[RMDB]
RNA sequence: GGGAACGACUCGAGUAGAGUCGAAAAGCAAACGACGAUAACUACGCUCUAGCCGCUUAAUGCCGCUAGCCAUCUACCACACGCUUCGCACAUGGGCAGUGGAUUUGAUGGUCAUCUCACAUCGUGCUAGCGAGGGAACCCUGUCCGGGGGUGAACCGACUCAUACUUGGUUCGCCAAGUAUGAGUCAAAAGAAACAACAACAACAAC
Reactivity to 2A3 in 0.01 (KOAc 150mM, MgCl2 10mM, bicine 150mM(pH8.5), 24C), signal-to-noise 5, nucleotides 027 to 156: g020c040a040a080a060c050g110a020c030g020a080u100a180a100c060u150a050c140g000c020u060c020u030a010g000c000c010g010c060u100u220a130a040u300g010c020c010g000c020u000a000g000c000c000a010u000c010u030a020c000c000a010c020a030c140g000c010u080u130c060g010c030a060c030a140u120g000g000g000c000a020g010u000g040g050a080u250u070u230g020a010u000g000g020u020c030a090u030c020u000c010a040c010a060u070c080g020u040g000c040u050a040g070c030g070a110g010g010g000a020a030c010c000c000u010g110u150c060c050g020g000g000g000g010u020g020a030a030c010c010
Reactivity to DMS in 0.01 (KOAc 150mM, MgCl2 10mM, bicine 150mM(pH8.5), 24C), signal-to-noise 1, nucleotides 027 to 156: g020c070a050a100a130c050g000a080c020g000a150u000a050a080c090u000a090c070g020c060u020c040u000a060g070c020c050g000c040u010u010a030a080u020g030c000c060g000c030u000a090g040c000c030a020u000c020u010a210c010c000a050c020a100c100g020c020u010u000c060g080c120a100c200a140u000g020g000g000c000a190g020u000g000g010a060u000u000u040g030a020u000g010g000u000c020a030u000c030u000c030a130c070a040u000c090g050u000g030c000u000a020g010c050g000a080g000g000g010a110a100c020c010c000u000g000u000c010c000g010g010g010g010g020u000g010a110a140c080c000